[RMDB]
RNA sequence: GGGAACGACUCGAGUAGAGUCGAAAAGUUUGAGUUCGCUCAAACAAAAAACCUUUGUGGAGUGUCGUGAGACUGAUGACCUCGGCGUAGUCCCAUUGGGACUGAUCCGAGCAAGGUUUCCACUCCACUCUGGUAAAAAGCUACCUUCGGGUAGCAACUAUGUGCUAUGGUUCGCCAUAGCACAUAGAAAAGAAACAACAACAACAAC
Reactivity to 2A3 in 0.01 (KOAc 150mM, MgCl2 10mM, bicine 150mM(pH8.5), 24C), signal-to-noise 4, nucleotides 027 to 156: g010u000u000u010g020a030g010u070u120c220g050c070u020c000a010a000a020c040a010a140a030a000a010a010c010c000u030u000u010g000u000g000g010a010g000u020g080u170c260g170u120g130a000g000a000c010u010g090a250u100g050a150c040c000u000c000g000g010c030g040u100a010g000u000c030c010c040a290u140u300g000g000g000a010c000u010g020a040u040c000c000g000a000g000c010a030a070g000g000u000u010u000c000c000a000c010u000c010c000a000c000u000c000u000g000g010u070a090a120a020a040a000g000c000u010a000c000c000u040u060c210g100g000g010u000a000g000c000a000a000
Reactivity to DMS in 0.01 (KOAc 150mM, MgCl2 10mM, bicine 150mM(pH8.5), 24C), signal-to-noise 1, nucleotides 027 to 156: g010u000u010u020g010a010g040u000u020c300g000c080u020c050a090a000a050c010a010a030a060a110a110a040c030c000u000u000u000g040u000g000g000a030g010u010g010u000c160g030u020g010a140g010a030c010u020g000a110u010g010a060c300c000u000c000g000g030c070g000u000a060g010u000c000c010c010a300u000u000g020g050g030a000c000u000g000a070u000c000c010g020a080g010c010a020a090g010g010u010u000u000c000c010a050c010u000c020c020a000c020u010c030u040g040g030u000a040a050a090a160a150g040c020u000a020c000c000u000u000c250g040g070g050u010a000g040c000a010a060